[RMDB]
RNA sequence: GGGAACGACUCGAGUAGAGUCGAAAAUCUAUAGUUGAAUUUAAUAGGUUGGCUACCUGUGACUGGACUGAAAGUGGUGAUUACACCCUUGCCAAUACUACAACAGAACCACUCAAACUUUUUGCUGAAACACUUGUGUUCGCACAAGUGAAAAGAAACAACAACAACAAC
Reactivity to DMS in 0.01 (KOAc 150mM, MgCl2 10mM, bicine 150mM(pH8.5), 24C), signal-to-noise 7, nucleotides 027 to 129: u000c000u020a100u020a090g000u000u000g010a060a030u010u040u030a100a100u030a060g000g000u000u000g020g000c030u040a070c020c010u010g030u000g020a070c150u030g000g010a110c100u020g000a100a030a040g000u010g000g010u020g000a140u000u000a070c080a050c040c050c050u000u000g010c050c040a040a070u010a080c030u050a000c110a040a040c030a080g020a150a090c030c040a050c100u020c090a040a070a060c110u020u000u020u000u010g040c000u040g070a070a090a100
Reactivity to 2A3 in 0.01 (KOAc 150mM, MgCl2 10mM, bicine 150mM(pH8.5), 24C), signal-to-noise 8, nucleotides 027 to 129: u030c020u010a100u020a140g060u040u140g040a100a080u100u080u110a170a100u110a040g050g000u010u020g010g000c020u050a030c010c000u030g010u010g080a070c050u060g000g040a020c000u050g090a080a040a020g030u100g040g000u040g010a070u020u090a060c030a040c010c000c000u030u020g000c000c000a020a010u060a050c010u020a010c000a060a000c000a020g020a030a020c020c010a040c050u080c040a040a090a110c040u100u070u020u110u170g040c040u070g030a060a040a000

Structure probing data (DMS and 2A3) for a 170-nucleotide construct. In probing experiments dimethyl sulfate is read out at A N1 and C N3, which are open when not base-paired. Source: RMDB library 15KLIB, as collected in RNAgym.